[RMDB]
RNA sequence: GGGAACGACUCGAGUAGAGUCGAAAAUAUCUUGGACCACAAUCUGAGACUAGACUGCCCAUUUUGGAUAUCAGAGUUUCAUCUCAAAUUUAAUUAACAUCUUUCUCCUUCUUGUUCGAUGUGUCUAGCUUUUUGCGGUGUAUUCUAAUGGUCGUCCAAUCAACAUCUAUUUCGAUAGAUGUUGAUUAAAAGAAACAACAACAACAAC
Reactivity to 2A3 in 0.01 (KOAc 150mM, MgCl2 10mM, bicine 150mM(pH8.5), 24C), signal-to-noise 9, nucleotides 027 to 156: u090a020u010c010u030u030g020g010a030c020c020a070c130a100a040u030c020u030g010a010g020a040c060u050a050g050a110c050u110g030c020c020c020a050u140u150u090u100g050g010a030u040a040u150c070a060g020a020g130u080u180u090c040a060u020c020u010c050a040a080a070u150u230u170a080a120u090u130a040a040c020a060u030c030u040u100u020c040u080c030c010u120u100c040u120u150g040u110u090c030g010a030u020g050u010g030u040c050u060a040g030c040u050u070u030u040u090g020c020g000g020u030g020u050a060u030u050c020u070a100a070u080g030g000u030c030g010u000c020c010
Reactivity to DMS in 0.01 (KOAc 150mM, MgCl2 10mM, bicine 150mM(pH8.5), 24C), signal-to-noise 4, nucleotides 027 to 156: u010a040u000c010u000u000g010g010a060c010c020a100c140a060a160u000c030u000g020a080g010a070c030u000a090g010a090c050u000g020c020c020c020a230u000u010u000u000g010g000a100u000a070u000c070a100g010a120g020u000u000u000c070a090u000c030u010c050a040a050a120u000u000u000a070a120u000u000a060a090c050a060u000c020u000u000u000c030u010c020c030u000u000c040u000u000g010u000u000c050g020a060u010g020u000g000u010c040u000a080g000c040u000u000u000u010u010g040c030g040g040u010g010u000a040u000u000c010u000a070a090u000g010g010u000c030g010u000c030c030
This 207-nucleotide RNA was probed chemically with 2A3 and DMS. The RNA was probed in 150 mM KOAc, 10 mM MgCl2 and 150 mM bicine (pH 8.5) at 24 C. Source: RMDB library OK3TST, as collected in RNAgym. 2A3 adducts were read by reverse transcription with SuperScript II with manganese.